This 177-nucleotide RNA was probed chemically with DMS and 2A3. Values cover nucleotides 27 to 126. Conditions: 150 mM KOAc, 10 mM MgCl2 and 150 mM bicine (pH 8.5), 24 C. The data come from the RNA Mapping Database (RMDB), library VIROID. DMS adducts were read by reverse transcription with MarathonRT.

RNA sequence: GGGAACGACUCGAGUAGAGUCGAAAAGGAGGGGAUGCUAGGAGUUAGGGGAGACCGAAGCGAGGAGGAAAGCAAAGAAAGCAACGGGGCUAGCAGGUGGGUGUUCCGCCCCCCGAGAGGGAACGAGCAGAUAGAUCUAGUUCGCUAGAUCUAUCUGAAAAGAAACAACAACAACAAC
Reactivity to DMS in 0.01 (KOAc 150mM, MgCl2 10mM, bicine 150mM(pH8.5), 24C), signal-to-noise 1, nucleotides 027 to 126: g000g000a070g000g000g000g000a050u010g010c040u000a110g000g020a140g030u000u010a100g010g000g000g000a090g000a040c030c050g000a090a090g000c090g020a050g030g000a120g050g010a030a060a060g000c080a070a080a080g000a030a090a080g000c040a110a130c100g040g000g000g020c110u000a050g000c050a000g010g010u000g000g020g010u010g000u000u000c030c050g010c020c000c010c000c020c000g010a070g010a080g010g000g000a120a060c180g010a110g020
Reactivity to 2A3 in 0.01 (KOAc 150mM, MgCl2 10mM, bicine 150mM(pH8.5), 24C), signal-to-noise 1, nucleotides 027 to 126: g020g010a060g020g010g000g000a040u080g010c010u050a060g000g030a100g060u090u140a040g030g000g030g020a050g050a040c040c010g050a030a010g070c050g050a040g060g060a020g060g010a160a000a000g020c040a000a070a090g050a050a060a010g010c000a010a070c040g000g040g000g000c000u020a000g010c000a010g010g060u070g010g000g000u080g070u110u030c010c020g040c010c010c010c000c000c000g060a060g000a040g070g030g000a030a090c060g000a040g000